The record gives the reactivity of an RNA of 177 nucleotides to DMS.
RNA sequence: GGGAACGACUCGAGUAGAGUCGAAAAGAUAUGGACACGAGGAUCACCUGCCCACAACAGCGAAUAACGAGGGAUCGGAAACGAUCCCUCGUUAUUCGACAUGUGGAUGGUGGGAGUGUCCUAAGUCGAUGUGACUAAACUUCGGUUUAGUCACAUCAAAAGAAACAACAACAACAAC
Reactivity to DMS in 0.01 (KOAc 150mM, MgCl2 10mM, bicine 150mM(pH8.5), 24C), signal-to-noise 1, nucleotides 027 to 126: g010a190u030a300u010g030g010a010c000a010c030g020a190g040g020a060u010c010a010c010c000u000g000c240c000c010a000c000a060a130c290a110g010c000g000a090a010u010a000a000c000g000a040g000g000g000a010u000c010g060g000a050a100a240c030g030a010u000c030c000c000u010c000g000u000u000a000u010u010c000g000a020c040a140u000g000u000g000g000a150u000g010g010u000g000g010g000a030g030u000g020u000c010c000u010a000a090g000u010c130
DMS adducts were read by reverse transcription with MarathonRT. It was measured as part of the RMDB library TTRINS.